[RMDB]
An RNA of 170 nucleotides, treated with 2A3 and DMS and read out base by base.
Values are in units of 0.01, from 0 to 300, in steps of 10.
For DMS the reverse transcriptase was MarathonRT.
The RNA was probed in 150 mM KOAc, 10 mM MgCl2 and 150 mM bicine (pH 8.5) at 24 C.
RNA sequence: GGGAACGACUCGAGUAGAGUCGAAAACGGCAGACCGCCCAUUGGGUUCACACCCCCAGGCCGCGGGCCGGCUGUUCUUCUUUCUCUUUCGUCGUCAUCCUUGGCUAGCCUCUGGAGUUCCUCUUCUCGCCCUAAUCGUUCGCGAUUAGGAAAAGAAACAACAACAACAAC
Reactivity to 2A3 in 0.01 (KOAc 150mM, MgCl2 10mM, bicine 150mM(pH8.5), 24C), signal-to-noise 9, nucleotides 027 to 129: c010g020g000c010a010g060a220c000c010g010c000c010c010a080u090u170g070g000g010u190u180c090a050c010a060c120c020c000c000c010a020g020g010c050c040g040c050g020g010g040c060c020g040g000c020u020g010u070u030c030u060u010c000u020u120u010c020u000c000u020u040u020c040g020u010c010g020u010c030a070u050c060c000u030u030g040g000c020u030a030g030c000c010u040c040u050g030g010a050g030u030u020c000c000u020c000u050u020c020u010c020g060c010
Reactivity to DMS in 0.01 (KOAc 150mM, MgCl2 10mM, bicine 150mM(pH8.5), 24C), signal-to-noise 9, nucleotides 027 to 129: c060g000g000c040a090g000a190c040c050g010c000c020c040a180u040u030g010g020g020u050u060c180a090c210a190c160c070c000c050c060a080g020g000c150c120g020c070g000g020g040c100c030g020g000c040u030g000u000u000c080u030u020c020u030u050u000c020u020c080u020u020u000c040g030u020c050g000u000c030a080u030c000c000u020u030g000g000c000u010a070g020c040c020u000c030u030g010g000a120g000u000u000c030c000u000c080u030u020c000u000c050g010c300